[RMDB]
An RNA of 177 nucleotides, treated with DMS and 2A3 and read out base by base. The data come from the RNA Mapping Database (RMDB), libraries RFM100 and RFMREP. The RNA was probed in 150 mM KOAc, 10 mM MgCl2 and 150 mM bicine (pH 8.5) at 24 C.
RNA sequence: GGGAACGACUCGAGUAGAGUCGAAAAUCCCCAGACACCGGCCACCCUCUUCCAGCCCCUGCGGCCAGUGCAAGGAGGCACCAAUGCUCUGAGGCUGUCGCGUGGUGCAGCGUCGAGCAUCCUCGCCGAUGAGGUCAAUAUUCGUAUUGACCUCAUCAAAAGAAACAACAACAACAAC
Reactivity to DMS in 0.01 (KOAc 150mM, MgCl2 10mM, bicine 150mM(pH8.5), 24C), signal-to-noise 8, nucleotides 027 to 126: u010c020c000c000c190a080g010a090c080a050c060c030g010g000c030c030a090c040c030c030u010c040u000u000c060c050a120g010c050c030c020c040u010g020c080g010g000c030c020a060g010u010g020c050a110a100g020g010a100g010g000c300a100c090c090a120a030u010g000c010u000c010u040g020a050g010g000c000u000g000u010c070g000c150g000u020g000g020u010g010c010a030g000c000g000u000c010g000a040g010c010a030u000c020c010u010c050g030c120c110
Reactivity to 2A3 in 0.01 (KOAc 150mM, MgCl2 10mM, bicine 150mM(pH8.5), 24C), signal-to-noise 9, nucleotides 027 to 126: u010c010c000c000c000a020g040a020c020a010c030c020g020g010c010c010a040c010c020c000u030c010u080u040c030c010a020g020c010c000c000c010u040g020c030g010g010c000c030a040g020u050g060c010a030a060g100g010a030g020g030c030a020c040c050a050a040u040g000c000u000c080u170g010a020g050g000c010u010g010u060c030g020c060g130u130g040g050u110g010c010a010g000c010g270u010c010g000a000g000c000a010u030c000c020u040c030g040c020c020